[RMDB]
RNA sequence: GGGAACGACUCGAGUAGAGUCGAAAAAGUUGCUGUGGAACUCGUACUGGAUGUCAAUGCUGUCCACAUCGCUACCAUUUUCCAUGAUGGGCUGCUCGUCGGUGGAGGGGCAUUUGAAAAACUCCUCGGAUCAAUUAGAGUUCGCUCUAAUUGAUCCAAAAGAAACAACAACAACAAC
Reactivity to 2A3 in 0.01 (KOAc 150mM, MgCl2 10mM, bicine 150mM(pH8.5), 24C), signal-to-noise 3, nucleotides 027 to 126: a010g070u090u090g010c030u010g000u030g030g010a090a060c020u010c120g010u080a030c040u080g070g100a100u130g100u190c040a050a040u080g020c060u060g060u000c000c000a000c000a040u090c020g010c020u040a080c020c030a060u020u020u060u070c040c040a070u230g040a040u060g010g160g050c070u060g000c040u040c080g080u040c060g040g060u030g030g030a040g030g010g030g000c050a060u080u090u220g130a100a100a020a010a020c000u000c010c030u010c070
Reactivity to DMS in 0.01 (KOAc 150mM, MgCl2 10mM, bicine 150mM(pH8.5), 24C), signal-to-noise 3, nucleotides 027 to 126: a100g010u000u000g010c020u010g020u000g000g030a060a100c120u000c090g000u000a060c060u010g020g010a050u010g010u020c030a060a100u010g020c050u010g000u010c010c030a040c040a040u010c050g000c050u000a080c040c010a110u000u000u010u020c130c090a100u010g000a070u000g010g000g010c080u010g000c060u000c080g000u000c070g010g010u000g000g010a040g000g000g010g000c030a060u010u000u000g000a080a070a070a060a060c130u000c030c020u000c230
Structure probing data (2A3 and DMS) for a 177-nucleotide construct. The RNA was probed in 150 mM KOAc, 10 mM MgCl2 and 150 mM bicine (pH 8.5) at 24 C. For DMS the reverse transcriptase was MarathonRT. Values cover nucleotides 27 to 126. 2A3 adducts were read by reverse transcription with SuperScript II with manganese.